The record gives the reactivity of an RNA of 177 nucleotides to DMS. DMS adducts were read by reverse transcription with MarathonRT. Reactivities are rounded to 0.1 and cut off at 0 and 3. It was measured as part of the RMDB library OK2TRN. The RNA was probed in 150 mM KOAc, 10 mM MgCl2 and 150 mM bicine (pH 8.5) at 24 C.
[RMDB]
RNA sequence: GGGAACGACUCGAGUAGAGUCGAAAAUGGCAUUACAGGCGUGCACCACCACGCCCCGCUAAUUUUUCGUAUUUUUAGUAAAAAUAGGGUUGCACCAUGUUGGCCAGGCUGGUCUUUAGCUCCUGACAAUACCGUGGUCAUUCGUGACCACGGUAUUAAAAGAAACAACAACAACAAC
Reactivity to DMS in 0.01 (KOAc 150mM, MgCl2 10mM, bicine 150mM(pH8.5), 24C), signal-to-noise 2, nucleotides 027 to 126: u000g010g000c070a100u010u010a070c130a080g000g020c030g000u000g010c070a210c120c070a070c100c000a040c080g000c000c000c050c180g030c040u000a020a030u000u010u000u010u000c080g000u010a020u010u000u000u000u000a050g020u020a030a020a040a050a070u000a120g000g020g010u010u000g020c050a100c000c010a080u000g020u020u000g000g010c020c040a020g000g000c070u010g000g000u010c020u000u000u010a060g010c070u000c000c020u000g010a080c300